Chemical mapping of a 177-nucleotide RNA with 2A3 and DMS. The DMS profile rests on 999 reads. The reactions ran in a buffer of 150 mM KOAc, 10 mM MgCl2 and 150 mM bicine (pH 8.5), at 24 C.
[RMDB]
RNA sequence: GGGAACGACUCGAGUAGAGUCGAAAAUACAAGUACGAAAGUACAAGCCUUAUCAGUUGGGCCUUCUGGUCAAAUUAGCGCUGACCCAGGAGGUCCUUCGCAUGAGGUCGACAAGCGCUAAAAGAAACAACAAAUUCCUGUUCGCAGGAAUUUGUUGAAAAGAAACAACAACAACAAC
Reactivity to 2A3 in 0.01 (KOAc 150mM, MgCl2 10mM, bicine 150mM(pH8.5), 24C), signal-to-noise 1, nucleotides 027 to 126: u160a050c050a230a000g020u000a000c000g060a180a000a000g010u020a000c050a070a000g020c000c000u030u000a050u080c110a160g110u120u150g070g010g000c000c010u000u000c000u020g000g020u010c000a030a050a300u100u040a070g000c000g020c080u000g050a060c000c060c040a000g000g020a050g000g000u000c010c000u000u000c020g000c000a000u030g030a010g010g000u050c010g050a040c050a220a050g030c000g100c080u080a010a170a000a000g190a040a220a040
Reactivity to DMS in 0.01 (KOAc 150mM, MgCl2 10mM, bicine 150mM(pH8.5), 24C), signal-to-noise 2, nucleotides 027 to 126: u010a080c190a090a110g000u000a020c010g000a140a070a110g030u000a020c000a190a150g000c000c000u000u000a060u010c140a140g000u010u000g010g000g000c000c020u000u000c000u000g010g010u000c010a010a040a050u000u010a030g000c060g040c030u000g000a010c110c020c010a020g020g020a000g020g010u000c000c020u020u000c050g000c220a080u000g020a020g010g010u000c040g000a060c220a050a070g000c020g020c000u010a000a030a080a160g020a100a080a120
Notes: Values cover nucleotides 27 to 126. For 2A3, 722 sequencing reads were counted. For DMS the reverse transcriptase was MarathonRT.